An RNA of 177 nucleotides, treated with 2A3 and DMS and read out base by base.
RNA sequence: GGGAACGACUCGAGUAGAGUCGAAAAGAUAUGGAUGUAGGGAGCUGAUGGUCGGAAACGACCAUUCAGCGACGAUCUACAGUCCUAAGUCAAAAGCCUUUACCAGCCUUCGGGCUGGUAAAGGCAACACUACGAACUUGUUCGCAAGUUCGUAGUGAAAAGAAACAACAACAACAAC
Reactivity to 2A3 in 0.01 (KOAc 150mM, MgCl2 10mM, bicine 150mM(pH8.5), 24C), signal-to-noise 1, nucleotides 027 to 126: g050a010u070a020u150g000g000a010u010g010u000a000g000g010g000a000g020c010u010g010a010u000g000g020u020c000g000g060a090a060a020c010g000a000c000c020a020u100u050c020a000g030c010g010a010c000g000a010u010c000u000a010c010a010g240u110c000c000u030a150a040g060u030c020a060a000a100a080g020c000c000u020u010u000a010c000c000a010g130c010c040u050u220c300g130g020g020c010u000g040g000u010a000a000a000g020g000c000a000a010
Reactivity to DMS in 0.01 (KOAc 150mM, MgCl2 10mM, bicine 150mM(pH8.5), 24C), signal-to-noise 2, nucleotides 027 to 126: g010a030u000a300u010g010g010a140u000g000u000a010g010g000g000a030g010c000u000g020a040u000g000g000u010c000g010g000a100a060a260c000g020a010c010c000a000u010u010c020a000g010c000g000a050c240g010a040u000c000u000a000c010a010g020u000c000c010u000a050a160g010u000c030a090a090a160a070g020c000c000u000u000u000a020c000c000a010g000c000c000u010u010c260g020g010g030c000u000g000g010u000a000a010a020g000g030c020a020a020
The reactions ran in a buffer of 150 mM KOAc, 10 mM MgCl2 and 150 mM bicine (pH 8.5), at 24 C. 2A3 is a SHAPE reagent: it acylates the 2'-hydroxyl of flexible nucleotides of all four kinds. It was measured as part of the RMDB library TTRDEL. DMS adducts were read by reverse transcription with MarathonRT.